[RMDB]
RNA sequence: GGGAACGACUCGAGUAGAGUCGAAAAGAAAGUGUGCACUUGAUACCGCGUGACUUCGGUCACGUAGUGGCAGCGCGCAGGACUUUGCUGCCACUACUUAGUCCUGAGGUAUCUUGUGCUCACGAAACCAGUCGGUCGAUUUCGAUCGACCGACUGGAAAAGAAACAACAACAACAAC
Reactivity to 2A3 in 0.01 (KOAc 150mM, MgCl2 10mM, bicine 150mM(pH8.5), 24C), signal-to-noise 2, nucleotides 027 to 126: g190a090a020a010g000u000g000u000g000c000a010c000u000u000g020a000u000a000c000c000g060c070g010u070g010a000c010u060u060c210g040g000u010c060a000c000g000u000a000g000u000g040g000c020a000g000c120g000c030g060c110a040g010g030a060c030u190u130u220g000c010u010g000c000c000a000c000u000a000c000u050u230a030g080u090c000c020u080g010a040g010g000u000a000u000c000u000u000g000u000g000c000u030c000a000c000g000a010a000a000